[RMDB]
RNA sequence: GGGAACGACUCGAGUAGAGUCGAAAAUUAUACCCGCAUCUCAUUCAGACCCUUUAUGGAACUGUCAUUCAACCCCAAAAAUCUAGUGCAAAUAUUGUCUUAAUUACUUAGGCUAAAAGAAAUAAGUUAUACAAUACACUCUUCGGAGUGUAUUGAAUCUAUAAUUGCUGUUCGCAGCAAUUAUAGAAAAAGAAACAACAACAACAAC
Reactivity to 2A3 in 0.01 (KOAc 150mM, MgCl2 10mM, bicine 150mM(pH8.5), 24C), signal-to-noise 1, nucleotides 027 to 156: u080u010a040u140a100c000c010c040g000c030a120u070c110u080c030a040u150u010c000a000g000a110c030c070c000u040u140u180a080u080g000g010a020a050c000u010g010u000c010a040u150u110c010a010a060c010c060c040c060a100a030a000a000a100u030c080u150a070g000u040g110c030a060a040a040u110a080u080u070g030u000c010u020u140a180a130u070u080a040c030u040u030a000g020g000c000u020a030a080a000a130g050a060a180a030u100a010a010g010u010u060a070u010a270c000a000a000u010a000c010a000c000u000c000u050u020c180g030g000a010g010u020g010u000a000u000u000g000a000a000
Reactivity to DMS in 0.01 (KOAc 150mM, MgCl2 10mM, bicine 150mM(pH8.5), 24C), signal-to-noise 1, nucleotides 027 to 156: u000u000a230u030a190c010c000c050g000c130a100u000c050u030c000a090u010u000c090a100g000a190c050c030c000u000u000u000a130u010g020g030a100a060c060u010g020u000c020a140u010u020c090a130a210c040c010c060c030a040a100a160a090a070u000c060u000a090g030u000g010c010a130a080a090u000a050u000u000g010u020c010u030u000a060a130u000u010a080c030u010u000a130g010g040c040u000a100a030a150a160g010a060a130a040u000a040a050g000u010u010a160u000a110c020a060a000u000a000c000a000c010u000c000u020u010c260g040g010a010g050u000g000u000a000u000u000g000a060a120